An RNA of 177 nucleotides, treated with 2A3 and DMS and read out base by base.
DMS adducts were read by reverse transcription with MarathonRT.
2A3 adducts were read by reverse transcription with SuperScript II with manganese.

[RMDB]
RNA sequence: GGGAACGACUCGAGUAGAGUCGAAAAGCUCGGAGACGAGCAAGGCUGACAAAACCCUGUCCCGACCUCCACGUGGUGUCGGCUGGAUAAUGCUGCAUUAUGUUGCAUUUAUCAACUGGGAAGAAAACAUUAUUACGAGCUUCGGCUCGUAAUAAUGAAAAGAAACAACAACAACAAC
Reactivity to 2A3 in 0.01 (KOAc 150mM, MgCl2 10mM, bicine 150mM(pH8.5), 24C), signal-to-noise 9, nucleotides 027 to 126: g010c000u000c000g020g020a110g020a050c020g000a000g000c000a000a060g030g000c010u020g010a020c020a030a190a060a120c010c000c010u020g040u030c000c000c000g020a050c000c020u080c030c030a130c110g100u220g020g010u030g000u020c010g010g000c010u040g030g000a010u010a020a010u010g000c010u020g000c020a070u130u140a160u300g030u030u020g000c010a010u040u060u120a030u030c010a010a040c060u080g010g010g030a070a070g070a050a100a000a010
Reactivity to DMS in 0.01 (KOAc 150mM, MgCl2 10mM, bicine 150mM(pH8.5), 24C), signal-to-noise 6, nucleotides 027 to 126: g010c000u010c010g020g010a190g010a220c010g000a020g000c010a100a040g020g010c020u020g010a040c020a100a090a140a100c070c060c030u010g000u010c020c000c000g000a080c040c020u000c040c050a140c130g000u020g010g020u010g000u000c000g010g010c040u000g000g000a020u010a010a010u000g000c000u010g010c000a170u050u060a070u050g020u000u010g010c010a000u020u010u010a010u000c010a090a080c060u020g000g000g010a100a070g010a100a070a100a200

The RNA was probed in 150 mM KOAc, 10 mM MgCl2 and 150 mM bicine (pH 8.5) at 24 C.